[RMDB]
RNA sequence: GGGAACGACUCGAGUAGAGUCGAAAAUCGGUUCUUCUUCGAUCCGGACCGGCUCAUCUCGGCAAGAGGCGGCAGUCCUCAGUACUCUUACUCUUUCCUAUAAAGAGGAGACUGCUGGACUCGCCGCGACUGUAAGGUUGUUCGCAACCUUACAGUCAAAAGAAACAACAACAACAAC
Reactivity to 2A3 in 0.01 (KOAc 150mM, MgCl2 10mM, bicine 150mM(pH8.5), 24C), signal-to-noise 2, nucleotides 027 to 126: u040c010g000g020u020u000c010u150u000c000u100u160c070g040a030u020c010c010g000g030a030c030c000g000g040c000u000c010a090u050c010u020c000g020g040c080a120a050g040a030g050g080c000g000g000c000a000g000u000c000c000u000c010a020g000u050a220c000u020c000u070u110a200c010u010c000u020u060u060c040c050u140a140u180a250a010a000g000a000g000g020a000g000a010c000u010g000c090u030g000g010a000c010u020c050g000c000c000g020c000
Reactivity to DMS in 0.01 (KOAc 150mM, MgCl2 10mM, bicine 150mM(pH8.5), 24C), signal-to-noise 1, nucleotides 027 to 126: u000c020g010g020u000u000c040u010u010c150u010u000c220g020a000u000c040c050g030g040a120c160c010g000g010c000u010c100a260u000c000u000c000g010g000c180a140a180g010a130g010g030c000g020g000c000a000g010u000c010c000u010c010a000g030u000a080c050u020c020u010u010a300c010u000c010u000u000u010c200c190u010a180u060a040a000a020g000a030g010g000a010g010a030c010u000g000c100u010g000g000a030c010u000c160g000c020c000g010c010